[RMDB]
RNA sequence: GGGAACGACUCGAGUAGAGUCGAAAAUUGAUAAUUUGUUGUGUAACUUCAUUUAAAUGAAUUGAAACAAAUUUAAUACAAGUGGAUGUAGGAUAACCGUCCGUCCUUUACAAUGGUAUAAAAGUGAACGACACAGACCUCUUCGGAGGUCUGUGAAGUAUCGUAAAAAGUUCGCUUUUUACGAUACAAAAGAAACAACAACAACAAC
Reactivity to 2A3 in 0.01 (KOAc 150mM, MgCl2 10mM, bicine 150mM(pH8.5), 24C), signal-to-noise 2, nucleotides 027 to 156: u170u040g030a040u040a170a050u010u010u050g000u020u010g060u010g020u020a030a010c030u020u000c020a040u080u110u190a180a170a030u090g040a020a060u090u020g050a040a080a000c010a020a090a020u070u180u120a120a050u160a070c020a100a040g060u030g040g020a050u060g080u130a040g040g000a040u030a150a070c020c010g020u000c000c020g010u000c020c000u000u050u010a050c060a120a140u090g070g030u090a090u070a160a060a030a020g090u100g050a070a010c060g020a010c010a000c000a000g000a010c000c000u000c020u050u030c060g090g000a000g000g000u000c000u000g000u000g000a000a000
Reactivity to DMS in 0.01 (KOAc 150mM, MgCl2 10mM, bicine 150mM(pH8.5), 24C), signal-to-noise 2, nucleotides 027 to 156: u020u000g020a140u010a040a060u000u000u000g030u010u010g010u000g000u000a120a090c090u000u010c000a070u030u000u000a110a110a080u010g000a080a060u000u000g000a140a100a070c020a050a060a040u000u000u000a040a150u010a100c060a060a100g050u000g010g010a030u000g020u010a050g010g020a080u000a060a190c080c070g020u010c030c020g020u000c000c010u000u000u000a040c050a100a070u000g030g020u000a100u020a020a030a030a130g020u010g010a020a050c010g040a230c010a010c000a020g000a040c000c020u010c010u020u000c300g050g060a020g030g010u010c000u000g010u010g010a020a050
The record gives the reactivity of an RNA of 207 nucleotides to 2A3 and DMS. For 2A3 the reverse transcriptase was SuperScript II with manganese. For 2A3, 1,524 sequencing reads were counted. The DMS profile rests on 3,691 reads.